RNA sequence: GGGAACGACUCGAGUAGAGUCGAAAAGGAACGUUGUUCGCAACGUUCCGUGCCGGAAACGCACAUGACGAUCGCGCGCAUGUCGGGAAACCGUAAACGCGAGCAUCAUGGUGUUCGCACCAUGAAAAACACCUACUACGUUCGCGUAGUAGGUGUUAAAAGAAACAACAACAACAAC
Reactivity to DMS in 0.01 (KOAc 150mM, MgCl2 10mM, bicine 150mM(pH8.5), 24C), signal-to-noise 4, nucleotides 027 to 126: g010g000a000a000c000g020u000u000g010u010u010c200g010c010a000a000c000g010u000u010c000c000g000u000g010c050c110g020g010a070a070a070c080g000c090a090c030a040u000g000a060c070g010a080u000c030g000c010g020c040g010c110a120u010g010u010c020g010g000g000a120a070a190c060c010g020u010a040a130a060c040g000c010g000a040g000c200a120u000c000a000u000g000g020u000g010u000u010c100g020c020a040c000c040a050u000g010a030a040a070
Reactivity to 2A3 in 0.01 (KOAc 150mM, MgCl2 10mM, bicine 150mM(pH8.5), 24C), signal-to-noise 3, nucleotides 027 to 126: g000g000a010a000c000g000u010u020g040u060u110c240g000c120a000a000c000g000u000u000c000c000g000u030g030c010c010g090g080a130a120a010c070g040c010a010c010a030u070g120a120c030g040a060u050c020g000c000g000c000g000c050a020u050g040u090c030g000g020g070a110a100a030c030c010g060u150a070a100a050c030g000c010g020a010g060c020a080u040c000a000u010g020g000u000g020u000u060c120g000c020a010c000c000a020u010g080a090a020a010
An RNA of 177 nucleotides, treated with DMS and 2A3 and read out base by base. The data come from the RNA Mapping Database (RMDB), library M2PK50. 2A3 adducts were read by reverse transcription with SuperScript II with manganese. For DMS the reverse transcriptase was MarathonRT. The reactions ran in a buffer of 150 mM KOAc, 10 mM MgCl2 and 150 mM bicine (pH 8.5), at 24 C.